[RMDB]
RNA sequence: GGGAACGACUCGAGUAGAGUCGAAAAGAAGCAGAUGAGGGCAUACCGGGAUUUCAGUCACCCCGUAAAACGCUGAAUUUAUAUAGUCGCAAACGACGAAACUUACGCUCUGGCAGCCUAACGGCCGGCCAGACACUACAACGGUUCGCAGAUGGGCGCUAGAAAGUGACUUCGGUCACUUUCUAGCAAAAGAAACAACAACAACAAC
Reactivity to 2A3 in 0.01 (KOAc 150mM, MgCl2 10mM, bicine 150mM(pH8.5), 24C), signal-to-noise 1, nucleotides 027 to 156: g020a020a000g010c010a000g040a090u070g020a110g000g080g000c000a010u010a110c070c000g010g000g000a000u000u000u040c020a000g000u020c020a040c050c000c000c030g070u120a000a000a000a000c000g000c000u000g000a000a000u010u030u000a100u000a030u110a020g020u000c030g000c100a120a080a080c050g050a020c020g020a060a010a000c030u080u050a020c050g000c060u000c000u010g060g000c030a040g000c000c020u080a070a060c060g000g020c010c010g070g020c000c000a000g010a000c000a000c000u070a000c010a110a000c050g060g010u040u020c020g000c050a000g010a160u070g070g000g010c000
An RNA of 207 nucleotides, treated with 2A3 and read out base by base. The 2A3 profile rests on 709 reads. 2A3 adducts were read by reverse transcription with SuperScript II with manganese. Reactivities are rounded to 0.1 and cut off at 0 and 3.